This 177-nucleotide RNA was probed chemically with 2A3 and DMS. The data come from the RNA Mapping Database (RMDB), library OK1LIB. For 2A3, 4,928 sequencing reads were counted. For DMS, 6,983 sequencing reads were counted. The RNA was probed in 150 mM KOAc, 10 mM MgCl2 and 150 mM bicine (pH 8.5) at 24 C.
RNA sequence: GGGAACGACUCGAGUAGAGUCGAAAAUACGAUUUCUUCACACCAGAAUGAUAUACGGACGAAGUUAACAUCAUUAUUAGCGCUAGCAAGAUGCAAGCACGUCUUGAGUGAAGGAACAUUGAGAUCACUCGGUCCUGCAAUUCGUUGCAGGAUCGAGAAAAGAAACAACAACAACAAC
Reactivity to 2A3 in 0.01 (KOAc 150mM, MgCl2 10mM, bicine 150mM(pH8.5), 24C), signal-to-noise 5, nucleotides 027 to 126: u210a040c090g090a130u010u000u000c010u000u000c000a020c010a040c010c050a040g070a140a060u130g040a030u080a020u030a140c040g010g100a030c040g080a220a000g030u060u040a110a080c030a040u060c010a020u000u220a060u180u200a140g030c020g040c140u070a050g010c010a010a040g040a060u090g000c070a060a090g020c030a020c040g010u000c000u030u070g050a040g010u000g000a000a000g030g000a010a000c000a020u030u160g130a060g020a090u060c000a010
Reactivity to DMS in 0.01 (KOAc 150mM, MgCl2 10mM, bicine 150mM(pH8.5), 24C), signal-to-noise 5, nucleotides 027 to 126: u030a050c120g000a120u000u000u000c010u000u000c010a010c000a180c110c120a120g010a100a070u020g010a150u040a130u000a070c130g020g000a070c050g010a170a170g000u000u020a090a200c060a010u000c030a060u040u020a100u020u030a060g010c020g020c200u010a120g010c000a080a060g000a050u000g010c070a070a080g000c100a090c010g020u030c030u010u000g000a070g030u000g010a020a000g000g000a000a040c090a090u020u030g000a110g000a110u010c100a150